[RMDB]
RNA sequence: GGGAACGACUCGAGUAGAGUCGAAAACAAAAACGGAUUGUGUCCGUAAUCACAACAAACAAAAACAAAUGGAUUGUGUCCUUAAUCACAAAAACAAAACAAAAAGGAUUGUGUCCGUAAUCACAAAGACUAUGGACUAGUUCGCUAGUCCAUAGUCAAAAGAAACAACAACAACAAC
Reactivity to DMS in 0.01 (KOAc 150mM, MgCl2 10mM, bicine 150mM(pH8.5), 24C), signal-to-noise 2, nucleotides 027 to 126: c010a050a060a040a180a140c040g030g000a130u020u070g000u000g080u000c000c000g020u000a060a060u060c060a000c100a040a120c300a080a150a140c300a010a010a010a060a060c220a090a120a020u050g000g000a020u000u000g000u000g000u000c010c070u000u000a040a070u060c000a070c090a000a060a030a010a120c270a100a120a040a130c300a160a050a090a080a030g000g090a040u000u000g000u000g000u000c000c000g030u000a060a040u000c030a040c080a060a000a210
Reactivity to 2A3 in 0.01 (KOAc 150mM, MgCl2 10mM, bicine 150mM(pH8.5), 24C), signal-to-noise 3, nucleotides 027 to 126: c030a000a140a020a010a010c020g010g080a170u040u100g020u050g080u000c000c000g120u130a020a070u070c010a020c010a070a020c040a050a150a030c070a000a180a030a020a000c130a000a150a100u080g040g010a050u020u040g010u040g020u130c010c020u080u160a040a050u060c020a020c040a060a000a050a030a090c060a030a070a010a060c090a030a040a020a070a010g040g020a080u040u080g000u050g030u090c000c020g160u150a130a140u170c000a000c040a020a020a020
Record summary
Source: RMDB library OK1LIB, as collected in RNAgym. Structure probing data (DMS and 2A3) for a 177-nucleotide construct. The RNA was probed in 150 mM KOAc, 10 mM MgCl2 and 150 mM bicine (pH 8.5) at 24 C. For DMS, 1,832 sequencing reads were counted. High DMS reactivity at an A or C suggests that its Watson-Crick edge is free.